[RMDB]
RNA sequence: GGGAACGACUCGAGUAGAGUCGAAAAUAGCGCAGGAACGUAUCGAGUGUCGUGCGGUUCUUCUCGAAGCCGUAGGGCCAGAAGUCCUCGCCCAUCUCGGCGACAACCUGCUCGACGUGCGACGUCAUAUGAUUUUCGUUUUCGAACGAAAAUCAUAAAAAGAAACAACAACAACAAC
Reactivity to DMS in 0.01 (KOAc 150mM, MgCl2 10mM, bicine 150mM(pH8.5), 24C), signal-to-noise 5, nucleotides 027 to 126: u010a100g030c180g010c020a010g000g000a090a120c030g010u000a080u010c010g000a040g020u000g000u000c110g010u000g030c010g010g020u000u000c010u000u010c010u010c190g030a090a090g020c000c000g010u020a130g010g030g010c010c090a040g000a040a030g000u000c010c020u010c010g010c000c000c030a070u000c030u000c030g000g000c030g010a090c170a080a050c010c010u000g000c000u010c080g000a020c050g030u000g020c110g000a150c040g020u000c040a240
Reactivity to 2A3 in 0.01 (KOAc 150mM, MgCl2 10mM, bicine 150mM(pH8.5), 24C), signal-to-noise 4, nucleotides 027 to 126: u120a010g090c040g000c030a010g020g010a070a080c010g030u060a090u260c010g000a030g010u070g060u100c100g090u180g030c000g000g010u010u020c010u020u010c020u020c110g110a160a010g010c000c010g060u190a110g000g090g070c010c010a010g000a010a000g030u000c020c060u160c020g000c000c020c010a050u050c000u000c000g020g020c000g010a040c010a030a080c010c010u030g000c040u020c040g000a000c010g010u140g110c100g080a110c000g070u010c010a020